Source: RMDB library OK2TST, as collected in RNAgym. The record gives the reactivity of an RNA of 177 nucleotides to DMS and 2A3. Reactivities are rounded to 0.1 and cut off at 0 and 3. The reactions ran in a buffer of 150 mM KOAc, 10 mM MgCl2 and 150 mM bicine (pH 8.5), at 24 C. The 2A3 profile rests on 2,432 reads. 2A3 adducts were read by reverse transcription with SuperScript II with manganese.
RNA sequence: GGGAACGACUCGAGUAGAGUCGAAAAUCGGCCAUCUGCCUGCCGUCUUCAUUCCAGCCGGCCCGAUGACCAGCGGACUGCCGAAUGAUGAAAAGGCGAAAACCCGCCAGCUUUAUGCCGAAGGCAAGGCUAAAUACUACUUCGGUAGUAUUUAGCCAAAAGAAACAACAACAACAAC
Reactivity to DMS in 0.01 (KOAc 150mM, MgCl2 10mM, bicine 150mM(pH8.5), 24C), signal-to-noise 3, nucleotides 027 to 126: u010c050g000g010c020c220a080u000c060u010g000c020c010u010g020c050c050g000u000c050u010u020c020a090u010u000c050c050a090g010c070c040g020g040c000c060c050g000a070u010g010a090c110c090a150g000c020g000g010a060c010u000g010c060c270g010a040a060u000g030a050u000g000a090a080a060a170g000g010c000g010a030a090a120a180c130c030c030g010c060c070a100g010c060u000u000u000a060u020g000c000c030g000a120a070g020g020c070a140a110
Reactivity to 2A3 in 0.01 (KOAc 150mM, MgCl2 10mM, bicine 150mM(pH8.5), 24C), signal-to-noise 2, nucleotides 027 to 126: u080c020g000g010c020c040a130u050c060u120g030c000c000u000g050c050c030g050u040c020u040u020c000a070u060u000c040c020a010g060c040c000g060g060c020c010c010g080a080u120g100a090c060c000a000g050c020g000g010a100c040u050g010c030c010g020a030a070u060g010a010u050g020a020a010a030a090g020g000c010g020a050a060a020a070c020c030c030g000c020c020a000g000c030u110u150u050a110u260g020c000c020g080a040a030g050g000c050a050a030